An RNA of 177 nucleotides, treated with DMS and 2A3 and read out base by base. It was measured as part of the RMDB library OK1LIB. The reactions ran in a buffer of 150 mM KOAc, 10 mM MgCl2 and 150 mM bicine (pH 8.5), at 24 C. The 2A3 profile rests on 2,991 reads. The DMS profile rests on 1,285 reads.
RNA sequence: GGGAACGACUCGAGUAGAGUCGAAAAACACUUUCGAUAACUGAGUUAAUACCACAUCGAGAGGAAGCGUUUCGUGAAGUUGCGAUUCCAAAAAUAUAUUCAAUAGCAAAAUUAACUCUGUACAAUGCGUAAAUCAGGAGUUCGCUCCUGAUUUACGAAAAGAAACAACAACAACAAC
Reactivity to DMS in 0.01 (KOAc 150mM, MgCl2 10mM, bicine 150mM(pH8.5), 24C), signal-to-noise 2, nucleotides 027 to 126: a180c170a280c040u000u040u000c070g080a140u080a070a120c010u040g000a010g000u000u050a020a000u000a130c160c080a080c300a000u010c070g010a040g000a130g000g030a000a200g080c000g000u000u000u000c010g010u000g020a030a120g000u000u000g000c000g050a080u000u000c060c040a080a050a200a190a040u040a140u040a150u040u040c050a040a080u010a030g000c210a070a090a030a020u010u000a000a100c010u000c000u000g000u000a000c190a060a120u080g000
Reactivity to 2A3 in 0.01 (KOAc 150mM, MgCl2 10mM, bicine 150mM(pH8.5), 24C), signal-to-noise 4, nucleotides 027 to 126: a000c100a010c000u030u040u050c020g000a040u040a190a140c040u020g000a000g010u010u030a060a020u100a160c020c060a120c060a090u060c020g010a010g000a010g070g050a000a040g060c020g000u000u030u040c090g030u100g190a160a050g080u110u110g000c000g020a010u040u030c030c040a000a040a050a040a000u180a010u080a050u060u160c060a100a070u040a140g050c050a050a120a050a000u010u020a000a010c010u000c040u050g060u120a010c070a070a130u170g070
For DMS the reverse transcriptase was MarathonRT.